[RMDB]
RNA sequence: GGGAACGACUCGAGUAGAGUCGAAAAGAUAUGGACCUAAAUAGCAACAGCCUGUGACUCGGAAACGAGUCCAGGACAUGCUAUUAGGUCCUAAGUCAAAACCUUCCAGUCUUCGGACUGGAAGGAACAUAUUUUGUGACUUCGGUCACAAAAUAUGAAAAGAAACAACAACAACAAC
Reactivity to 2A3 in 0.01 (KOAc 150mM, MgCl2 10mM, bicine 150mM(pH8.5), 24C), signal-to-noise 4, nucleotides 027 to 126: g010a000u010a000u060g000g010a000c010c000u040a180a260a240u030a090g010c110a060a300c160a300g010c020c000u180g150u300g120a010c000u000c000g010g000a000a000a000c000g000a000g000u000c000c000a000g000g000a010c000a030u190g000c000u000a010u000u000a000g000g000u000c010c000u000a000a000g000u000c000a000a000a100a230c000c000u010u000c000c000a000g010u000c010u070u300c300g160g000a010c000u010g000g000a010a000g000g000a000a000
Reactivity to DMS in 0.01 (KOAc 150mM, MgCl2 10mM, bicine 150mM(pH8.5), 24C), signal-to-noise 4, nucleotides 027 to 126: g000a020u000a040u010g000g000a020c000c010u000a020a050a050u000a010g010c010a150a200c160a230g010c000c000u000g000u020g010a010c000u000c000g000g000a030a010a030c000g010a010g010u000c000c000a000g000g000a020c100a040u010g010c000u000a000u000u000a010g000g010u000c000c000u000a000a050g000u000c000a150a100a130a230c010c010u000u000c000c000a020g000u000c000u000u020c240g020g010a020c000u000g000g000a010a000g000g020a020a080

The record gives the reactivity of an RNA of 177 nucleotides to 2A3 and DMS. The DMS profile rests on 6,032 reads. The RNA was probed in 150 mM KOAc, 10 mM MgCl2 and 150 mM bicine (pH 8.5) at 24 C. It was measured as part of the RMDB library TTRDES. Reactivities are given for positions 27 through 126.